[RMDB]
The record gives the reactivity of an RNA of 177 nucleotides to 2A3 and DMS.
2A3 adducts were read by reverse transcription with SuperScript II with manganese.
The data come from the RNA Mapping Database (RMDB), library OK2TST.
Conditions: 150 mM KOAc, 10 mM MgCl2 and 150 mM bicine (pH 8.5), 24 C.
DMS adducts were read by reverse transcription with MarathonRT.

RNA sequence: GGGAACGACUCGAGUAGAGUCGAAAAAACGAAAAAAGUCGUUGUGAUCGUUCGGAUUUUUUGAAAUCUCAAAAAAAGAAACCUUCAAUGCCGUUGGAUCACUUGAAGGAUAAGGAAAUGUUGAAGAUCCUAAUCAGUAGUUCGCUACUGAUUAGGAAAAAGAAACAACAACAACAAC
Reactivity to 2A3 in 0.01 (KOAc 150mM, MgCl2 10mM, bicine 150mM(pH8.5), 24C), signal-to-noise 1, nucleotides 027 to 126: a000a020c130g090a130a100a000a000a020a010g040u020c010g010u040u140g090u040g040a010u070c080g300u070u020c010g070g000a130u010u090u020u010u000u070g120a080a180a230u100c040u000c000a080a110a050a020a000a000a000g100a060a100a030c000c010u000u000c000a000a100u030g070c050c000g080u040u090g030g030a010u000c000a010c020u010u090g010a080a020g090g010a010u070a080a020g130g020a160a060a090u120g030u000u090g030a060a010g080a100
Reactivity to DMS in 0.01 (KOAc 150mM, MgCl2 10mM, bicine 150mM(pH8.5), 24C), signal-to-noise 3, nucleotides 027 to 126: a010a050c060g000a020a030a050a120a080a130g010u000c030g010u000u010g030u000g020a020u000c060g020u000u000c030g020g020a020u000u000u000u010u000u010g010a040a080a080u020c110u020c040a000a000a050a050a080a060a130g000a090a050a090c110c030u000u000c000a010a030u000g000c050c030g000u010u020g020g020a070u000c010a040c080u000u010g020a050a020g010g000a080u010a030a090g000g000a060a060a090u010g000u010u010g000a090a100g000a160